[RMDB]
RNA sequence: GGGAACGACUCGAGUAGAGUCGAAAAUUUCGUGGGAAAUAUUGUCUUGGGCACUGGGGUAGUUUUAAACUCCUGACUACAUAGAGUGAUAUACAUCUUGAAGAGGUAUCUCCCUGAGAUCAUAUUCGAGUUUCAUAGAGUUCGCUCUAUGAAACUCAAAAGAAACAACAACAACAAC
Reactivity to 2A3 in 0.01 (KOAc 150mM, MgCl2 10mM, bicine 150mM(pH8.5), 24C), signal-to-noise 1, nucleotides 027 to 126: u040u040u030c060g020u090g020g070g050a000a080a020u050a030u120u080g130u050c020u030u050g000g000g010c020a020c070u070g000g070g000g000u060a020g010u020u020u010u280a170a190a040c010u000c000c000u060g070a070c010u060a030c010a000u090a030g080a020g020u040g030a000u010a020u020a080c040a110u020c030u100u110g070a100a010g010a020g030g040u050a010u010c010u010c030c000c000u000g050a020g020a020u050c030a060u050a100u090u150c070
Reactivity to DMS in 0.01 (KOAc 150mM, MgCl2 10mM, bicine 150mM(pH8.5), 24C), signal-to-noise 2, nucleotides 027 to 126: u000u010u020c030g010u010g010g020g020a060a020a040u010a030u000u000g030u000c020u000u000g010g000g010c080a030c100u000g010g010g020g010u000a020g010u000u000u000u000a060a100a070c070u020c070c040u000g010a040c040u000a100c080a090u020a070g000a070g010u010g010a090u000a140u020a080c090a060u000c020u010u010g000a060a060g010a130g010g010u000a020u000c040u000c030c020c020u000g010a060g020a030u000c090a090u010a100u000u010c150